[RMDB]
RNA sequence: GGGAACGACUCGAGUAGAGUCGAAAACGGAGGCGACGAUCUGUUCAGCAAGCCACGGAACGUGACGCAACAACCGCUGACGCGCAGCCUCACGCGCAGCAAGGUAGACCAGCACUUCGCGCUGUUCAUUUCACAUCGCAUUCGUGCGAUGUGAAAUAAAAGAAACAACAACAACAAC
Reactivity to 2A3 in 0.01 (KOAc 150mM, MgCl2 10mM, bicine 150mM(pH8.5), 24C), signal-to-noise 2, nucleotides 027 to 126: c050g050g010a020g000g010c000g020a080c010g020a090u000c050u090g050u040u050c010a040g010c110a130a000g050c020c040a010c000g040g070a090a020c040g040u020g020a030c070g030c100a150a080c070a060a020c150c070g010c020u010g030a160c010g000c000g000c010a030g050c000c010u000c010a020c000g040c000g000c000a040g010c030a050a080g030g030u040a020g010a070c040c010a000g000c010a010c070u070u100c110g030c020g000c050u000g010u120u070c040
Reactivity to DMS in 0.01 (KOAc 150mM, MgCl2 10mM, bicine 150mM(pH8.5), 24C), signal-to-noise 2, nucleotides 027 to 126: c090g030g030a060g000g000c010g000a110c050g010a080u010c060u000g010u010u000c070a030g000c060a120a070g010c070c040a080c030g000g000a070a070c120g020u000g000a080c110g060c130a110a060c180a090a070c170c080g010c030u000g000a090c020g000c010g000c240a120g010c000c000u020c030a130c010g030c010g000c020a000g000c040a190a080g010g020u010a030g000a120c070c040a060g000c000a050c020u000u000c120g020c110g020c040u000g000u000u010c090